[RMDB]
RNA sequence: GGGAACGACUCGAGUAGAGUCGAAAACGGCGAUCAUCAGUGCCGCCGAGGUCACCGAUGCUCUGGCCAUCCAUCCCGGCUAUGGCUUUUUGUCGGAAAACGCCGAUUUCGCUGAAAAGGUGAUUCACAGGACAUUAUGGUUCGCCAUAAUGUCCUGAAAAGAAACAACAACAACAAC
Reactivity to DMS in 0.01 (KOAc 150mM, MgCl2 10mM, bicine 150mM(pH8.5), 24C), signal-to-noise 3, nucleotides 027 to 126: c100g030g010c010g000a030u000c020a060u000c030a050g000u000g010c070c030g010c160c180g000a160g010g010u020c020a040c010c040g020a020u000g020c040u000c010u000g010g020c020c010a110u000c080c080a110u000c040c010c020g010g020c110u000a060u000g010g000c010u000u000u010u000u000g000u000c070g000g000a070a030a070a100c110g010c020c020g000a160u010u000u010c040g010c030u000g000a080a050a070a150g000g010u000g000a090u010u010c090a230
Reactivity to 2A3 in 0.01 (KOAc 150mM, MgCl2 10mM, bicine 150mM(pH8.5), 24C), signal-to-noise 3, nucleotides 027 to 126: c060g010g020c050g050a120u300c120a000u020c020a030g020u020g020c010c010g000c050c100g160a140g030g010u190c030a010c010c000g000a010u030g020c000u010c020u060g050g000c020c000a000u000c010c000a060u030c000c030c000g010g020c070u110a070u140g020g040c000u110u030u000u110u160g100u050c040g040g020a060a090a030a030c060g000c030c000g070a080u030u080u040c110g000c070u080g040a050a050a050a070g040g030u040g040a100u110u100c120a110
An RNA of 177 nucleotides, treated with DMS and 2A3 and read out base by base. DMS adducts were read by reverse transcription with MarathonRT. 2A3 is a SHAPE reagent: it acylates the 2'-hydroxyl of flexible nucleotides of all four kinds. Values cover nucleotides 27 to 126. DMS (dimethyl sulfate) methylates the pairing face of unpaired adenines and cytosines.